[RMDB]
RNA sequence: GGGAACGACUCGAGUAGAGUCGAAAACUUUUUCGAAGUAUGUUGAGAAUGCACAAAGGUUGGUGAAUUCGAUGGUACAGUAUGGAUAUGAUUAUACUGUGGAAUCCCAUGUUAGAUUUAUUGCGACACGCUGCAAGCGAUUCGUCGCUUGCAGCGUAAAAGAAACAACAACAACAAC
Reactivity to DMS in 0.01 (KOAc 150mM, MgCl2 10mM, bicine 150mM(pH8.5), 24C), signal-to-noise 1, nucleotides 027 to 126: c040u000u000u000u010u000c150g020a030a130g020u020a040u000g010u000u020g000a230g030a040a070u000g010c020a040c030a060a130a090g040g010u000u000g000g000u000g010a080a060u000u000c060g000a110u010g000g070u000a010c010a010g000u000a020u000g000g020a140u010a060u000g000a300u040u010a050u000a040c000u000g010u000g010g020a150a060u000c060c030c000a060u000g040u010u010a090g000a080u000u020u000a070u010u010g030c020g020a100c220